Conditions: 150 mM KOAc, 10 mM MgCl2 and 150 mM bicine (pH 8.5), 24 C.
The record gives the reactivity of an RNA of 177 nucleotides to DMS and 2A3.
2A3 adducts were read by reverse transcription with SuperScript II with manganese.
DMS adducts were read by reverse transcription with MarathonRT.

RNA sequence: GGGAACGACUCGAGUAGAGUCGAAAAGAAGGAGAUGAAAGCGACUUUAGAAUCGGCUAACUGAGCAGACAGAUACAGACGGCAAGUAUCGUCGCCAGAGAUACAGUCGCAAAUAGCCGCAGGAGAAAGCCUCAGUGAUAUUCGUAUCACUGAGGCUAAAAGAAACAACAACAACAAC
Reactivity to DMS in 0.01 (KOAc 150mM, MgCl2 10mM, bicine 150mM(pH8.5), 24C), signal-to-noise 3, nucleotides 027 to 126: g010a110a060g000g020a110g000a150u030g000a050a120a110g000c000g010a030c020u000u010u040a100g010a150a100u050c010g020g000c080u020a030a300c000u000g000a040g000c010a110g010a080c010a060g020a030u000a000c000a100g000a180c140g030g000c040a160a040g000u000a000u000c000g010u000c010g030c000c010a000g010a110g000a170u000a010c150a030g000u010c050g000c030a030a020a040u010a090g000c040c020g000c120a130g010g010a150g020a080a040
Reactivity to 2A3 in 0.01 (KOAc 150mM, MgCl2 10mM, bicine 150mM(pH8.5), 24C), signal-to-noise 3, nucleotides 027 to 126: g140a040a000g050g010a120g020a030u110g040a160a080a020g000c020g000a010c000u020u070u050a050g050a150a090u060c010g090g010c040u070a130a030c020u000g000a020g070c020a070g010a010c000a030g010a000u000a010c000a040g140a020c050g090g030c070a140a000g010u000a010u020c000g010u020c000g000c000c000a000g020a000g000a030u110a080c060a030g000u010c000g000c060a070a010a000u070a000g000c010c010g000c000a020g020g150a070g110a100a130